[RMDB]
RNA sequence: GGGAACGACUCGAGUAGAGUCGAAAAGAUAUGGAGAUCGCGAUAAGGUGCAUUCGGAAACGAAUGGCACCUUUUGACGCGAAUUCCUAAGUCAAAAUCAUUGCUAAUGUUCGCAUUAGCAAUGAAAGCAUGAUAGUGCGUUCGCGCACUAUCAUGCAAAAGAAACAACAACAACAAC
Reactivity to DMS in 0.01 (KOAc 150mM, MgCl2 10mM, bicine 150mM(pH8.5), 24C), signal-to-noise 1, nucleotides 027 to 126: g000a090u000a240u000g070g030a040g020a060u000c000g010c010g040a180u010a010a010g010g030u000g020c000a060u000u010c000g020g000a070a050a120c010g000a010a000u000g010g020c010a000c000c000u020u000u010u000g010a110c130g040c000g020a000a080u000u000c000c000u000a020a110g000u000c030a020a080a100a140u000c010a020u000u000g010c000u000a000a000u000g000u000u060c300g020c000a000u000u000a000g000c000a010a000u000g000a010a060a100

The record gives the reactivity of an RNA of 177 nucleotides to DMS. For DMS, 881 sequencing reads were counted. Values are in units of 0.01, from 0 to 300, in steps of 10. The RNA was probed in 150 mM KOAc, 10 mM MgCl2 and 150 mM bicine (pH 8.5) at 24 C.